[RMDB]
RNA sequence: GGGAACGACUCGAGUAGAGUCGAAAAUUAGACAACGGUCCUGCUGCCUUUGCCAAGGCUGUGAGAAAUCACAAGCGUGGUCUUAUCAUGGACACCACUUGGCGCGAUGCCCAUCAAUCCUUAUUGGCUACCCGUGUUCGUACCAUUGAUCUGGUAAAUGGUGGUACUAGUUCGCUAGUACCACCAUAAAAGAAACAACAACAACAAC
Reactivity to 2A3 in 0.01 (KOAc 150mM, MgCl2 10mM, bicine 150mM(pH8.5), 24C), signal-to-noise 2, nucleotides 027 to 156: u110u050a010g040a120c000a080a030c130g050g000u040c020c050u020g040c100u070g000c010c040u070u070u110g100c050c000a040a020g030g000c020u000g030u010g000a060g030a010a060a010u010c010a010c030a070a000g110c080g050u060g010g000u050c050u050u120a200u150c060a080u130g060g000a030c040a050c100c020a060c020u040u060g000g000c030g030c020g030a020u060g050c020c040c020a060u040c010a020a120u070c020c040u090u110a110u110u080g040g000c020u030a010c000c000c020g030u060g050u070u040c010g000u010a100c010c000a000u000u080g100a080u120c080u070g020g070u130a140a070